[RMDB]
Source: RMDB library M2RFPK, as collected in RNAgym.
Structure probing data (2A3) for a 207-nucleotide construct.

RNA sequence: GGGAACGACUCGAGUAGAGUCGAAAAACGCUUCACAAUGUGCGGCAAAGAAACAUUGUUUAUGCAAAGGCACCUCGCAAUGUGUGCUCAAACAUUGCUUAUUCAAACACGCUUCACAAUGUGCGACAAAACUUCACGGUCUUCGGACCGUGAAGAACUACUAGCCGGAGUUCGCUCCGGCUAGUAGAAAAGAAACAACAACAACAAC
Reactivity to 2A3 in 0.01 (KOAc 150mM, MgCl2 10mM, bicine 150mM(pH8.5), 24C), signal-to-noise 2, nucleotides 027 to 156: a000c020g000c000u040u010c000a000c000a030a040u000g000u010g020c060g050g000c100a260a110a000g070a000a030a000c000a000u000u000g080u010u100u040a100u050g030c010a000a100a050g160g000c000a000c000c000u000c040g030c010a030a060u020g030u010g040u000g040c040u090c110a020a090a000c000a010u000u000g000c010u030u120a090u140u130c050a030a060a020c030a020c060g040c070u140u140c040a070c060a180a150u190g030u050g000c010g060a020c080a000a070a010a010c010u000u030c000a000c000g020g000u000c000u020u060c140g060g000a000c000c020g020u000g000a000a000g000a000a000
The 2A3 profile rests on 908 reads. Conditions: 150 mM KOAc, 10 mM MgCl2 and 150 mM bicine (pH 8.5), 24 C.